This 177-nucleotide RNA was probed chemically with 2A3 and DMS.
Conditions: 150 mM KOAc, 10 mM MgCl2 and 150 mM bicine (pH 8.5), 24 C.
It was measured as part of the RMDB library RFMREP.
For DMS, 649 sequencing reads were counted.
Values cover nucleotides 27 to 126.
For DMS the reverse transcriptase was MarathonRT.

[RMDB]
RNA sequence: GGGAACGACUCGAGUAGAGUCGAAAAGUGAUGGAGUGGGUUGCCAACUGUCAUUACUCCACUUGGUGCAGAAUAACUGUCAGAAAUCUAUUCACAUAUGCCCAAAGAAGUCUGCCCAGGGUGAAACCCAUAAAUCGUGCUUCGGCACGAUUUAUGGAAAAGAAACAACAACAACAAC
Reactivity to 2A3 in 0.01 (KOAc 150mM, MgCl2 10mM, bicine 150mM(pH8.5), 24C), signal-to-noise 1, nucleotides 027 to 126: g000u010g000a000u060g030g010a070g090u070g070g000g040u220u200g280c060c070a090a090c050u030g070u050c020a000u010u120a040c000u000c000c000a040c030u020u020g040g000u130g050c000a000g030a060a000u110a110a090c020u050g070u170c040a000g150a020a170a040u090c070u140a090u120u110c050a090c010a130u120a070u190g040c020c000c060a000a030a060g040a110a040g040u000c010u020g000c030c010c000a000g000g000g010u120g070a110a040a020c020
Reactivity to DMS in 0.01 (KOAc 150mM, MgCl2 10mM, bicine 150mM(pH8.5), 24C), signal-to-noise 1, nucleotides 027 to 126: g020u000g000a080u000g000g000a130g050u000g010g000g010u010u070g000c060c020a070a160c020u000g010u000c050a020u000u000a110c030u010c030c010a100c000u020u030g010g000u000g010c000a010g000a110a050u000a050a120c140u000g000u000c050a060g020a070a080a110u000c030u000a100u030u010c040a100c120a100u020a110u010g010c070c000c000a130a100a140g020a050a170g020u000c020u000g010c000c000c000a030g000g010g020u000g000a100a110a170c160